Chemical mapping of a 207-nucleotide RNA with DMS and 2A3. DMS adducts were read by reverse transcription with MarathonRT. The RNA was probed in 150 mM KOAc, 10 mM MgCl2 and 150 mM bicine (pH 8.5) at 24 C.
[RMDB]
RNA sequence: GGGAACGACUCGAGUAGAGUCGAAAAGAACACGUCUCGGGACGACGCUAAACUCGCCCGGGUCGGGAUGGGUUUAACGACCCCUCGGGUUUCCUAGUUCCUAAAACUAGGUGGUGGAGUCAUAUAAAAAACUUCUACACGUUCGCGUGUAGAAGAAGAUGUAGAUUUACUUCGGUAAAUCUACAUCAAAAGAAACAACAACAACAAC
Reactivity to DMS in 0.01 (KOAc 150mM, MgCl2 10mM, bicine 150mM(pH8.5), 24C), signal-to-noise 1, nucleotides 027 to 156: g010a080a070c070a110c030g010u000c000u000c010g030g000g010a120c020g060a070c000g010c030u000a120a090a080c170u010c010g000c000c020c020g010g000g020u030c080g010g000g010a050u020g000g000g000u000u000u000a090a180c150g000a090c020c010c000c040u000c080g030g000g020u000u000u000c020c000u000a050g000u000u010c020c100u000a060a040a060a070c000u000a040g010g050u000g020g020u000g030g010a260g020u000c100a080u000a160u040a010a040a080a080a080a120c000u000u000c000u000a020c000a000c000g020u010u000c260g050c050g050u000g000u000a020g000a010a000g030a020a060
Reactivity to 2A3 in 0.01 (KOAc 150mM, MgCl2 10mM, bicine 150mM(pH8.5), 24C), signal-to-noise 3, nucleotides 027 to 156: g030a090a010c060a000c090g000u010c000u000c000g000g050g050a150c300g000a010c020g030c270u130a070a040a000c000u000c000g050c040c020c020g010g000g020u050c040g020g020g020a070u060g010g000g020u020u050u090a090a020c040g020a010c000c000c020c000u040c020g020g010g000u020u090u000c000c000u000a000g000u020u050c010c040u090a060a060a000a000c000u010a030g000g000u020g020g020u060g020g070a070g060u130c080a060u100a010u300a140a050a030a010a020a040c000u000u000c000u000a000c000a000c000g020u040u030c210g030c010g130u000g000u000a010g000a000a000g000a000a010
For 2A3, 2,663 sequencing reads were counted. 2A3 adducts were read by reverse transcription with SuperScript II with manganese. 2A3 is a SHAPE reagent: it acylates the 2'-hydroxyl of flexible nucleotides of all four kinds. Reactivities are given for positions 27 through 156.